[RMDB]
RNA sequence: GGGAACGACUCGAGUAGAGUCGAAAAAGUCAUGGCAGCCUCAGGCUAGCUCUUGAUGUUGAAUAACUUCUAUAAACCUGUGAACCCUGUUUUCCUCUUUAGUAUUACCAUGCAUGCAACUGGGUUUGUAAGUAACAGAGCUCUGAAUGUACUGGCAUCACUAUAAUCGAUUCGUCGAUUAUAGUGAAAAAGAAACAACAACAACAAC
Reactivity to DMS in 0.01 (KOAc 150mM, MgCl2 10mM, bicine 150mM(pH8.5), 24C), signal-to-noise 2, nucleotides 027 to 156: a120g000u010c030a050u000g010g030c010a040g020c060c040u020c040a110g010g040c030u000a090g020c040u000c030u000u000g010a090u010g010u000u000g000a150a160u000a080a070c020u010u000c030u000a120u000a100a070a100c020c020u000g010u000g020a060a070c030c020c010u000g020u000u000u000u000c030c000u000c060u000u000u000a090g020u000a080u000u010a080c030c010a070u010g000c010a090u010g010c040a040a050c050u000g020g010g030u000u000u010g030u000a040a100g010u000a090a110c080a080g000a080g000c000u000c030u000g010a070a070u010g010u000a050c100u010g010g050c050a260
Reactivity to 2A3 in 0.01 (KOAc 150mM, MgCl2 10mM, bicine 150mM(pH8.5), 24C), signal-to-noise 2, nucleotides 027 to 156: a000g000u030c020a030u050g000g000c000a000g040c040c030u120c120a050g040g000c050u050a050g000c000u020c020u100u100g020a030u040g020u100u040g050a060a050u120a130a050c060u050u040c050u060a080u090a110a110a140c010c050u060g020u030g090a020a010c010c040c020u030g030u040u060u060u020c030c010u070c070u140u090u120a010g020u030a020u090u060a030c030c040a010u110g030c010a010u050g000c000a080a070c050u010g080g000g000u020u030u000g010u020a080a130g000u000a070a020c030a020g060a030g040c000u060c030u060g100a080a050u100g010u080a050c070u020g000g020c020a020

An RNA of 207 nucleotides, treated with DMS and 2A3 and read out base by base.
High 2A3 reactivity points to a flexible backbone, as in loops and unpaired stretches.